[RMDB]
RNA sequence: GGGAACGACUCGAGUAGAGUCGAAAAUGUACAAAGGUGUGGCCCAUAAAAGUGUAGAUAGUGAGCAGUUUUAUACUGCAAUGGAAGACGCAUGGCAUUACAAAAAGACUCUUGCAAUGUGCAACAGACGGUGAGAGACGUUCGCGUCUCUCACCGUAAAAGAAACAACAACAACAAC
Reactivity to DMS in 0.01 (KOAc 150mM, MgCl2 10mM, bicine 150mM(pH8.5), 24C), signal-to-noise 1, nucleotides 027 to 126: u000g040u060a080c170a110a080a300g000g020u000g000u000g000g020c100c000c000a060u020a000a010a160a010g000u000g000u000a010g050a080u060a000g080u010g030a060g020c000a060g000u000u000u020u000a080u000a000c000u000g000c040a010a150u000g050g000a100a060g000a030c000g060c000a000u000g000g000c000a090u000u080a040c300a100a080a030a060a000g010a270c000u010c000u000u050g000c110a170a040u000g000u100g010c040a030a070c100a030g020